Annotation
Structure probing data (2A3 and DMS) for a 177-nucleotide construct. For 2A3, 10,569 sequencing reads were counted. It was measured as part of the RMDB library TTRDEL.
RNA sequence: GGGAACGACUCGAGUAGAGUCGAAAAGAUAUGGAAGCGAGCCUACCAGUCAACAGCUCGGAAACGAGACAUGACUCCCUAGGCGAUGAGCUUCCUAAGUCAAAAGCAUAGACUUCGGUCUAUGCAACAGCUUAAAUUGGUUCGCCAAUUUAAGCUGAAAAGAAACAACAACAACAAC
Reactivity to 2A3 in 0.01 (KOAc 150mM, MgCl2 10mM, bicine 150mM(pH8.5), 24C), signal-to-noise 3, nucleotides 027 to 126: g030a030u090a040u170g000g010a010a000g000c020g030a010g000c020c000u000a040c050c130a000g010u000c000a040a050c040a260g020c010u010c000g010g010a040a060a010c000g000a000g030a030c060a110u110g000a010c030u020c020c010c000u010a010g010g000c030g030a140u150g030a010g000c000u000u000c000c010u000a110a000g060u030c050a000a030a120a080g000c000a000u000a000g000a000c000u040u030c300g090g000u000c000u000a000u010g000c000a000a000
Reactivity to DMS in 0.01 (KOAc 150mM, MgCl2 10mM, bicine 150mM(pH8.5), 24C), signal-to-noise 5, nucleotides 027 to 126: g000a030u000a300u000g000g000a000a010g020c010g010a200g010c000c000u000a010c070c140a020g000u000c000a030a090c280a150g010c010u000c000g010g010a070a080a190c010g000a000g000a030c070a180u000g000a020c000u000c040c050c100u000a010g020g010c000g000a100u000g010a200g000c000u000u000c000c000u000a030a080g010u010c050a060a080a110a170g000c000a000u010a020g000a020c000u000u020c150g040g010u000c000u000a010u000g010c000a030a050